An RNA of 177 nucleotides, treated with 2A3 and DMS and read out base by base. 2A3 adducts were read by reverse transcription with SuperScript II with manganese. It was measured as part of the RMDB library M2PK90. High DMS reactivity at an A or C suggests that its Watson-Crick edge is free. For DMS, 1,462 sequencing reads were counted.

[RMDB]
RNA sequence: GGGAACGACUCGAGUAGAGUCGAAAAAGAAAGCAAGGCGAAGGGAAGCCACCACCGCGGGAGGUGUACGUUGUACGAGAGCUCAGCUUUUACCUUCCCAAACCGCGGAAAGGGAAAACCCAAAAAAUCGAUUAAUUCGAUUCGUCGAAUUAAUCGAAAAAGAAACAACAACAACAAC
Reactivity to 2A3 in 0.01 (KOAc 150mM, MgCl2 10mM, bicine 150mM(pH8.5), 24C), signal-to-noise 1, nucleotides 027 to 126: a000g060a010a030a020g000c040a050a050g020g030c050g130a080a040g030g000g010a070a000g040c050c030a010c020c000a010c000c010g000c020g030g000g000a020g000g000u000g020u000a040c120g100u100u130g030u040a040c070g020a010g000a010g200c000u040c100a010g000c020u000u020u000u030a010c030c010u020u010c000c000c000a020a030a020c030c000g000c000g020g040a090a130a110g060g010g000a000a070a010a020c060c010c050a100a100a000a000a000a000
Reactivity to DMS in 0.01 (KOAc 150mM, MgCl2 10mM, bicine 150mM(pH8.5), 24C), signal-to-noise 2, nucleotides 027 to 126: a080g020a000a030a070g030c030a070a100g020g030c020g000a150a130g020g000g020a090a050g010c110c070a230c020c000a090c000c020g000c000g020g030g000a030g020g010u010g010u000a030c170g000u010u000g020u000a040c050g000a090g010a080g000c020u010c060a070g000c000u000u000u010u000a030c030c030u000u010c010c010c000a010a070a060c000c030g010c000g020g010a020a060a100g000g000g000a010a110a130a140c010c000c020a020a030a050a060a070a100